[RMDB]
RNA sequence: GGGAACGACUCGAGUAGAGUCGAAAAGCGUCGGCGUUAACUAUUUUGGAUAUUACCUGAAGGAAAUAGCCGGGGGAGGCCGGUGGCUUAUCGCAGACGAUGUCGCGGGAUGGGACACGAGAAUAACCAUAUAGGUUCCUUUCGAGGAACCUAUAUGAAAAGAAACAACAACAACAAC
Reactivity to DMS in 0.01 (KOAc 150mM, MgCl2 10mM, bicine 150mM(pH8.5), 24C), signal-to-noise 4, nucleotides 027 to 126: g020c040g010u010c020g010g010c030g010u000u000a140a160c060u010a090u000u000u020u010g010g020a130u010a050u000u010a110c040c030u000g010a110a120g010g010a080a060a060u000a050g010c040c040g020g010g000g010g000a130g010g020c020c050g030g020u010g020g010c060u000u000a030u010c030g000c070a090g000a070c040g010a120u010g000u000c050g010c070g000g010g010a080u000g000g000g000a050c060a070c090g010a100g010a100a070u020a050a100c200
Reactivity to 2A3 in 0.01 (KOAc 150mM, MgCl2 10mM, bicine 150mM(pH8.5), 24C), signal-to-noise 3, nucleotides 027 to 126: g030c020g020u030c020g010g030c020g030u060u100a050a030c010u040a100u180u120u160u170g040g010a020u040a090u220u090a120c000c010u060g160a200a100g040g040a040a090a040u060a060g020c010c000g010g000g000g020g010a020g010g070c020c000g040g020u040g100g000c020u060u060a040u080c030g000c050a020g000a100c030g100a080u130g020u080c040g010c020g170g060g030a070u100g060g000g030a010c020a020c070g060a090g030a100a070u100a090a030c020